Chemical mapping of a 177-nucleotide RNA with DMS and 2A3.
For DMS, 6,458 sequencing reads were counted.
For 2A3, 2,747 sequencing reads were counted.
Reactivities are rounded to 0.1 and cut off at 0 and 3.
Source: RMDB library OK2TRN, as collected in RNAgym.
2A3 adducts were read by reverse transcription with SuperScript II with manganese.
DMS adducts were read by reverse transcription with MarathonRT.

RNA sequence: GGGAACGACUCGAGUAGAGUCGAAAAAUGCUGUGAGUACAGUGGAAAUAUAAGAUCUAUUCUGGGCUUGCUGCUCUGGUAAAUAGGUUGCCUUGGCAGGAUGCUACAUAUUAGGCUGGGGGUGGUACACACCGCAAUUAUUCGUAAUUGCGGUGUGAAAAGAAACAACAACAACAAC
Reactivity to DMS in 0.01 (KOAc 150mM, MgCl2 10mM, bicine 150mM(pH8.5), 24C), signal-to-noise 4, nucleotides 027 to 126: a070u010g010c020u010g010u000g010a150g030u000a060c040a030g020u000g010g020a060a060a100u010a130u010a100a090g000a060u000c050u000a080u010u000c070u000g000g010g010c020u000u000g000c060u010g010c020u000c060u010g010g010u000a020a050a120u010a090g020g010u000u010g010c030c020u000u000g010g010c010a030g000g010a060u000g000c030u000a030c060a050u010a080u000u000a050g000g010c040u000g010g010g000g010g020u000g000g000u000a190
Reactivity to 2A3 in 0.01 (KOAc 150mM, MgCl2 10mM, bicine 150mM(pH8.5), 24C), signal-to-noise 2, nucleotides 027 to 126: a010u100g030c010u010g020u050g110a070g120u120a040c020a020g040u040g070g080a010a090a010u230a020u060a100a040g020a070u020c010u040a070u120u050c040u060g000g040g000c020u050u060g070c030u050g000c010u020c030u030g000g030u050a050a090a080u120a110g160g030u070u070g010c000c020u020u040g030g000c020a000g020g060a020u050g000c000u050a070c010a030u180a030u080u100a040g040g000c000u020g000g000g010g000g030u050g000g000u060a020